[RMDB]
The record gives the reactivity of an RNA of 177 nucleotides to 2A3 and DMS. DMS adducts were read by reverse transcription with MarathonRT.
RNA sequence: GGGAACGACUCGAGUAGAGUCGAAAACAAAAAUAGACAAUCCUUUAUUGGCACACUCUAUCAACAACUCCAUUUCAGGUCUAACUUUCCAAGAGUGUCUCAUGAGCAGCCUUUUGUCUGGUGGUACAAAACAAAUAGCUUUCGAGCUAUUUGUUUUAAAAGAAACAACAACAACAAC
Reactivity to 2A3 in 0.01 (KOAc 150mM, MgCl2 10mM, bicine 150mM(pH8.5), 24C), signal-to-noise 2, nucleotides 027 to 126: c010a000a100a080a020a030u140a030g030a030c000a010a080u050c010c000u080u170u220a190u160u140g000g010c020a000c010a010c050u030c000u040a080u190c050a010a110c000a020a030c040u020c010c060a080u030u100u120c050a030g070g010u000c040u060a080a090c020u090u080u050c030c000a040a020g010a030g060u020g040u050c000u010c020a010u050g020a020g030c040a000g040c030c000u000u070u020u030g050u020c010u030g040g030u060g090g000u110a050c060
Reactivity to DMS in 0.01 (KOAc 150mM, MgCl2 10mM, bicine 150mM(pH8.5), 24C), signal-to-noise 4, nucleotides 027 to 126: c040a040a110a050a110a100u020a060g010a040c060a080a080u000c050c020u000u000u010a100u030u000g020g010c190a030c040a070c070u000c010u010a060u000c110a050a080c090a040a100c050u010c030c030a080u000u010u000c120a050g010g010u000c040u010a060a070c100u000u000u000c040c040a080a050g010a070g020u010g010u000c040u000c030a040u010g010a080g030c080a090g020c060c050u000u000u000u010g010u000c020u000g010g020u000g020g010u010a070c140